[RMDB]
RNA sequence: GGGAACGACUCGAGUAGAGUCGAAAAGCCGACCAGACUGGCCCGCAGGUGAAGGCGGCGGAUUCGGCGGAAUCUGACGCCGGAGAGCUCGGCGAGGACGCGUGCCCAGAACAGGCCCUCGUCGAGCGAGGCAACACCGAUUCGUCGGUGUUGCCUCAAAAGAAACAACAACAACAAC
Reactivity to DMS in 0.01 (KOAc 150mM, MgCl2 10mM, bicine 150mM(pH8.5), 24C), signal-to-noise 2, nucleotides 027 to 126: g020c050c010g040a140c000c060a110g000a060c020u010g000g030c060c000c040g010c110a040g000g010u020g000a170a100g010g000c000g000g000c000g000g010a010u000u000c020g040g020c280g010g010a040a020u010c000u000g000a000c000g020c010c000g000g010a040g010a190g000c020u000c000g000g000c030g000a000g000g000a110c170g020c060g000u000g020c040c020c120a210g000a100a220c090a160g000g020c050c000c020u000c000g050u010c000g010a000g000c000
Reactivity to 2A3 in 0.01 (KOAc 150mM, MgCl2 10mM, bicine 150mM(pH8.5), 24C), signal-to-noise 3, nucleotides 027 to 126: g030c010c020g030a040c000c030a050g040a110c000u050g010g000c000c000c020g020c030a030g000g070u100g100a080a030g030g010c010g000g000c000g010g010a050u030u040c030g060g030c190g160g030a020a010u030c020u010g010a000c010g010c000c030g000g020a060g000a000g000c000u000c010g000g000c000g000a000g000g000a070c110g000c090g230u110g030c020c020c090a070g080a110a030c020a010g070g060c010c000c000u000c000g000u000c000g000a000g000c000
This 177-nucleotide RNA was probed chemically with DMS and 2A3. 2A3 adducts were read by reverse transcription with SuperScript II with manganese. DMS adducts were read by reverse transcription with MarathonRT. For 2A3, 2,195 sequencing reads were counted. The RNA was probed in 150 mM KOAc, 10 mM MgCl2 and 150 mM bicine (pH 8.5) at 24 C. Values cover nucleotides 27 to 126. Values are in units of 0.01, from 0 to 300, in steps of 10.